[RMDB]
RNA sequence: GGGAACGACUCGAGUAGAGUCGAAAAAUUAAUUGAUGAGUCAUUUAUUGGUCAUGAUGCAUGGGACAAUAAAGAUAGACCGUUGGCAUUAUGUGCUGCAUUAUUACAUGAUUUAGGACAUGGUCCACGGGGAGAAAGUUUUCGAACUUUCUCCCCGAAAAGAAACAACAACAACAAC
Reactivity to 2A3 in 0.01 (KOAc 150mM, MgCl2 10mM, bicine 150mM(pH8.5), 24C), signal-to-noise 2, nucleotides 027 to 126: a000u100u140a000a040u200u110g050a040u010g060a090g030u030c030a010u020u000u040a040u040u030g020g000u000c010a000u030g200a240u280g070c020a010u020g000g020g050a220c010a010a050u070a040a040a000g220a060u160a080g080a010c010c020g000u020u130g030g000c020a010u040u060a060u100g040u050g010c020u030g010c000a030u030u100a070u070u150a290c070a020u090g050a050u060u170u150a070g000g010a030c090a050u050g020g000u000c010c000a000
Reactivity to DMS in 0.01 (KOAc 150mM, MgCl2 10mM, bicine 150mM(pH8.5), 24C), signal-to-noise 1, nucleotides 027 to 126: a070u000u040a140a200u020u000g000a110u010g010a080g000u000c040a110u000u000u010a020u000u010g000g030u000c040a020u030g000a240u000g030c010a000u010g020g000g000a140c140a010a000u000a000a000a080g020a060u070a110g020a100c010c120g030u040u010g000g010c160a020u000u000a050u040g000u000g000c010u040g000c110a010u000u000a070u050u020a080c200a090u000g000a050u010u000u060a110g020g020a070c000a000u000g000g000u010c010c060a110